The record gives the reactivity of an RNA of 177 nucleotides to 2A3 and DMS.
[RMDB]
RNA sequence: GGGAACGACUCGAGUAGAGUCGAAAAUGAUCGAGAGAUCUAAAUAUGUACGCGAGUCAAGUGCACAGACUCGAGCGAAAGCUCGGUCGAAAGACCGCGUACAUGCACCGGCAAGUGUACAGUCGAACGGAUAAAUCGAUUUCGAUCGAUUUAUCCGAAAAGAAACAACAACAACAAC
Reactivity to 2A3 in 0.01 (KOAc 150mM, MgCl2 10mM, bicine 150mM(pH8.5), 24C), signal-to-noise 2, nucleotides 027 to 126: u060g000a010u000c010g000a020g010a020g000a120u000c000u010a040a100a020u300a020u060g000u000a000c000g020c000g000a020g020u020c020a120a210g040u000g030c020a010c010a020g000a000c020u020c090g000a000g000c000g070a160a000a000g000c000u000c000g010g020u020c010g020a020a040a010g000a000c000c000g040c000g010u010a000c000a000u010g040c000a050c060c000g010g000c050a260a140g010u010g000u030a030c010a030g050u030c030g030a080a030
Reactivity to DMS in 0.01 (KOAc 150mM, MgCl2 10mM, bicine 150mM(pH8.5), 24C), signal-to-noise 3, nucleotides 027 to 126: u010g010a010u000c000g010a260g000a260g000a020u000c000u000a070a080a040u000a040u000g010u000a020c010g020c000g000a040g010u000c030a050a120g020u000g040c020a020c050a300g010a010c000u000c020g010a000g010c000g000a150a070a200g030c000u000c000g010g000u000c000g000a120a050a150g000a010c010c000g010c010g010u000a010c000a000u000g020c210a050c260c020g000g000c010a020a040g020u010g000u000a020c030a300g000u000c020g030a110a250
2A3 is a SHAPE reagent: it acylates the 2'-hydroxyl of flexible nucleotides of all four kinds. For DMS the reverse transcriptase was MarathonRT.